[RMDB]
RNA sequence: GGGAACGACUCGAGUAGAGUCGAAAAUGCUGAGCUUUCGAGCUCAGCAGAGGCAAGCAAGCAGCGCAACCAGACAAGACGAGCAUAAGAUCGAGCAUGCUACAAUACGGCACUUCGGUGCCGUAAACGUUGCUUAGCAUUUCGAUGCUAAGCAACGAAAAGAAACAACAACAACAAC
Reactivity to DMS in 0.01 (KOAc 150mM, MgCl2 10mM, bicine 150mM(pH8.5), 24C), signal-to-noise 2, nucleotides 027 to 126: u000g020c000u010g000a010g010c000u000u000u000c170g000a060g010c000u000c000a020g000c000a010g020a080g010g040c060a050a100g060c100a070a080g000c000a070g000c080g000c030a070a100c070c040a060g000a080c120a030a020g000a090c020g040a090g000c030a070u000a070a090g030a060u000c080g000a100g030c100a020u000g000c020u000a020c160a050a220u000a010c000g000g010c000a000c010u000u000c130g020g000u000g000c000c000g030u020a000a010a110
Reactivity to 2A3 in 0.01 (KOAc 150mM, MgCl2 10mM, bicine 150mM(pH8.5), 24C), signal-to-noise 1, nucleotides 027 to 126: u040g000c010u000g000a010g000c000u070u080u250c270g100a010g030c000u000c000a000g000c000a000g000a020g050g040c010a040a060g000c010a000a050g020c020a010g000c000g000c050a040a000c010c020a020g020a050c040a020a090g070a070c030g000a000g000c030a000u040a240a010g050a100u080c030g020a040g000c010a040u060g050c000u060a030c010a000a070u030a080c010g000g000c000a000c000u030u060c180g070g000u010g030c000c000g010u000a010a000a000
Structure probing data (DMS and 2A3) for a 177-nucleotide construct. For DMS the reverse transcriptase was MarathonRT. As a SHAPE reagent, 2A3 marks flexible, mostly unpaired nucleotides at the ribose 2'-OH. Reactivities are given for positions 27 through 126. The RNA was probed in 150 mM KOAc, 10 mM MgCl2 and 150 mM bicine (pH 8.5) at 24 C. The 2A3 profile rests on 1,445 reads.